[RMDB]
The record gives the reactivity of an RNA of 207 nucleotides to DMS and 2A3.
For DMS the reverse transcriptase was MarathonRT.
RNA sequence: GGGAACGACUCGAGUAGAGUCGAAAAUGGGAGUAUUAGACUUAUAUGUGCAAGAUGCUGGAGAGCCACAAGUGACCAUGGUAUGGACCAAUUCAUAGACUGGAGUGGAGACCGACAUACAUGUGUUCAUAGAAGUUUAACACUCUGGCUUGGCGCAUAAAAUAUCGUAUUUCGAUACGAUAUUUUAAAAAGAAACAACAACAACAAC
Reactivity to DMS in 0.01 (KOAc 150mM, MgCl2 10mM, bicine 150mM(pH8.5), 24C), signal-to-noise 4, nucleotides 027 to 156: u010g010g020g000a060g030u000a090u000u000a080g020a070c030u000u010a130u000a040u020g020u030g010c020a100a110g010a090u000g020c040u000g040g020a110g010a110g020c010c020a050c030a090a240g020u010g000a090c040c010a050u010g010g020u010a200u000g020g000a150c260c070a060a100u000u000c080a080u020a140g010a210c090u000g010g010a130g030u000g000g020a140g000a140c070c030g010a060c050a040u000a050c070a100u000g020u010g030u010u000c030a060u000a080g000a090a060g000u010u000u000a040a090c020a020c010u000c010u000g010g000c040u000u000g020g010c020g000c050a140
Reactivity to 2A3 in 0.01 (KOAc 150mM, MgCl2 10mM, bicine 150mM(pH8.5), 24C), signal-to-noise 5, nucleotides 027 to 156: u100g050g020g000a040g020u050a080u090u080a060g060a030c030u090u080a050u030a010u170g000u000g020c010a040a040g010a110u070g000c020u020g030g000a060g000a020g070c040c030a050c020a100a080g030u020g060a030c010c020a020u050g070g010u070a030u060g000g060a030c040c030a040a080u060u060c020a020u020a110g100a190c090u050g050g020a030g020u030g000g020a020g050a040c010c030g030a030c010a020u110a020c010a030u070g120u010g020u120u040c000a010u020a080g030a060a010g040u040u030u050a030a010c040a010c020u000c010u010g020g030c020u020u040g030g010c050g020c040a030

Conditions: 150 mM KOAc, 10 mM MgCl2 and 150 mM bicine (pH 8.5), 24 C. Source: RMDB library OK3TST, as collected in RNAgym.